[RMDB]
RNA sequence: GGGAACGACUCGAGUAGAGUCGAAAAGAAAGUAGCGAGAAUCUAAGGCGAUUCGAAGCCGCGUAAACAUACCGCGAAAGUAUGACCGUAACUAUCCGGGAAGAUAGAAAAGAAAAGCUACGAAAAAGGGUAUACUUGACUUCGGUCAAGUAUACCCAAAAGAAACAACAACAACAAC
Reactivity to DMS in 0.01 (KOAc 150mM, MgCl2 10mM, bicine 150mM(pH8.5), 24C), signal-to-noise 1, nucleotides 027 to 126: g010a070a050a090g000u000a000g010c000g000a300g050a050a150u000c000u000a010a020g000g000c000g000a110u020u090c180g000a030a210g020c030c000g000c130g000u060a030a150a000c030a000u000a000c000c000g010c300g000a150a020a060g010u000a000u000g010a300c000c000g000u000a000a110c000u000a000u040c000c000g000g000g040a200a030g000a000u000a000g000a150a120a080a110g020a100a060a130a140g000c000u000a000c000g000a000a120a100a150a040
Source: RMDB library OK1LIB, as collected in RNAgym. An RNA of 177 nucleotides, treated with DMS and read out base by base. The DMS profile rests on 1,339 reads.